[RMDB]
RNA sequence: GGGAACGACUCGAGUAGAGUCGAAAAGUGUGCAUGCUCCUCAUAUAUUGUUCUAGAUCCCAUGCAUGAUGCAUAUCGAUCGAUCUGAUCUGAAUUAGGUCAUCGAUGCGCAUCUGGAUCCCCAUCUUCUAUGGGUGAUCUUCGGAUCACCCAUAGAAAAAGAAACAACAACAACAAC
Reactivity to DMS in 0.01 (KOAc 150mM, MgCl2 10mM, bicine 150mM(pH8.5), 24C), signal-to-noise 1, nucleotides 027 to 126: g010u010g040u010g000c030a040u000g000c090u000c020c050u000c070a030u000a110u020a160u030u020g010u000u000c070u030a080g000a120u000c030c000c040a080u010g010c050a080u040g010a000u000g000c000a050u000a000u000c020g000a000u000c080g020a020u030c000u000g000a010u020c270u070g000a050a070u000u000a000g010g000u000c000a000u000c000g000a000u000g010c150g000c000a010u000c020u030g010g000a120u010c060c020c010c030a150u020c100u060
Reactivity to 2A3 in 0.01 (KOAc 150mM, MgCl2 10mM, bicine 150mM(pH8.5), 24C), signal-to-noise 4, nucleotides 027 to 126: g090u050g010u020g000c000a040u030g000c000u040c030c000u040c040a010u110a040u030a040u110u190g060u090u040c020u060a040g000a140u000c020c030c000a020u080g010c020a050u150g000a010u020g000c000a000u000a000u050c010g010a010u010c100g000a000u000c010u010g030a010u010c090u250g220a300a120u060u030a010g000g020u000c010a000u000c000g000a000u000g010c010g000c000a000u000c000u000g040g030a040u010c070c000c000c000a040u040c030u040